[RMDB]
Chemical mapping of a 177-nucleotide RNA with 2A3 and DMS.
For DMS the reverse transcriptase was MarathonRT.
It was measured as part of the RMDB library OK1LIB.
The RNA was probed in 150 mM KOAc, 10 mM MgCl2 and 150 mM bicine (pH 8.5) at 24 C.
As a SHAPE reagent, 2A3 marks flexible, mostly unpaired nucleotides at the ribose 2'-OH.
Reactivities are given for positions 27 through 126.
RNA sequence: GGGAACGACUCGAGUAGAGUCGAAAAGUUGGACGGUGUGCAUAUCGCCGCGGUGGUAUGGGUCGAUUCGGCGGUGCCCAUCGGUGAUGUGGUGGCGCAAUUCGACCAGGUGCGCUGCUUGCUGGCCAGUCACUAUCAGUUUCGACUGAUAGUGACUAAAAGAAACAACAACAACAAC
Reactivity to 2A3 in 0.01 (KOAc 150mM, MgCl2 10mM, bicine 150mM(pH8.5), 24C), signal-to-noise 6, nucleotides 027 to 126: g100u080u090g040g030a060c060g020g000u070g040u090g060c030a040u040a050u180c060g000c020c010g000c040g010g060u070g010g030u090a120u200g090g000g000u010c020g020a030u050u030c070g080g000c040g140g300u020g010c020c000c000a010u020c070g190g110u210g030a020u030g150u180g020g020u000g030g000c010g000c010a020a040u090u030c010g000a030c020c010a010g040g030u080g010c020g000c010u000g010c010u040u100g030c010u030g010g010c000c020
Reactivity to DMS in 0.01 (KOAc 150mM, MgCl2 10mM, bicine 150mM(pH8.5), 24C), signal-to-noise 5, nucleotides 027 to 126: g010u000u000g000g010a090c030g000g000u010g020u020g000c040a050u010a040u010c050g010c040c050g010c120g020g020u020g010g020u020a040u050g010g010g000u000c000g020a040u010u000c300g000g010c000g010g010u010g000c010c010c020a020u010c010g030g010u060g000a020u000g020u040g030g040u000g000g010c020g000c020a060a030u010u000c000g000a040c010c010a070g000g020u020g000c030g000c020u010g000c040u000u010g000c010u010g000g010c080c050